This 177-nucleotide RNA was probed chemically with DMS and 2A3. For 2A3, 6,082 sequencing reads were counted. For DMS the reverse transcriptase was MarathonRT.

[RMDB]
RNA sequence: GGGAACGACUCGAGUAGAGUCGAAAAGAUAUGGAUCGUAGGGAGUACGACAUGGCUAUGAAGUUACACCUCGGAAACGAGGUGUAAUGGAGCCAUGAAUCGUACAUCGAUCUACGAUCCUAAGUCACUAACUUUACCAGUUCGCUGGUAAAGUUAGAAAAGAAACAACAACAACAAC
Reactivity to DMS in 0.01 (KOAc 150mM, MgCl2 10mM, bicine 150mM(pH8.5), 24C), signal-to-noise 4, nucleotides 027 to 126: g000a030u000a300u010g000g000a010u000c000g020u000a000g010g000g010a100g010u000a000c000g010a060c010a010u000g000g010c000u000a300u010g010a140a250g000u000u000a010c000a010c000c000u010c010g020g000a060a070a160c010g010a010g010g020u000g010u000a000a000u000g000g010a000g020c000c000a000u010g000a060a060u000c000g010u000a000c100a220u010c140g010a120u020c000u000a010c000g010a010u000c000c000u000a000a090g000u000c030a300
Reactivity to 2A3 in 0.01 (KOAc 150mM, MgCl2 10mM, bicine 150mM(pH8.5), 24C), signal-to-noise 2, nucleotides 027 to 126: g030a010u070a030u120g000g000a000u000c010g000u010a010g040g060g050a140g020u020a000c010g010a000c000a010u020g020g000c010u120a300u300g040a030a000g000u000u000a000c000a000c000c000u000c010g000g030a070a080a020c020g000a000g000g000u000g010u000a000a020u010g000g010a000g010c000c000a010u000g000a000a010u030c000g000u010a020c030a090u120c010g010a050u070c000u000a000c010g000a000u000c000c000u000a030a020g020u000c010a000